[RMDB]
RNA sequence: GGGAACGACUCGAGUAGAGUCGAAAAGAUAUGGAUGGUCCUAGGGAGCUCGGUGUCGGAAACGACACCCGUGAGCGAAGAACUAGGCCAUCCUAAGUCAAAACUUCCUGCCUUCGGGCAGGAAGAACCUUGUUACUUUGUUCGCAAAGUAACAAGGAAAAGAAACAACAACAACAAC
Reactivity to DMS in 0.01 (KOAc 150mM, MgCl2 10mM, bicine 150mM(pH8.5), 24C), signal-to-noise 3, nucleotides 027 to 126: g000a020u000a050u020g000g000a000u000g000g000u000c010c010u000a020g000g000g000a080g050c020u000c010g040g010u010g000u000c000g000g000a020a030a050c000g010a020c000a000c000c050c300g010u000g020a010g040c000g010a100a120g000a200a260c010u000a000g000g000c000c000a000u020c000c000u000a000a050g010u010c010a050a100a130a210c000u010u000c000c000u000g010c000c000u010u020c300g030g010g050c000a030g010g000a010a000g000a030a130
Reactivity to 2A3 in 0.01 (KOAc 150mM, MgCl2 10mM, bicine 150mM(pH8.5), 24C), signal-to-noise 3, nucleotides 027 to 126: g000a010u020a000u070g010g000a010u000g010g040u300c010c010u010a000g040g000g010a210g000c010u000c030g020g000u010g000u000c000g020g000a000a000a000c000g000a010c010a020c020c020c030g300u260g030a000g000c020g070a200a060g020a010a010c000u000a000g000g000c000c000a000u000c000c000u000a000a000g000u000c000a010a020a150a230c010u000u010c010c000u000g010c020c010u060u140c300g070g000g000c000a000g000g000a000a010g000a000a000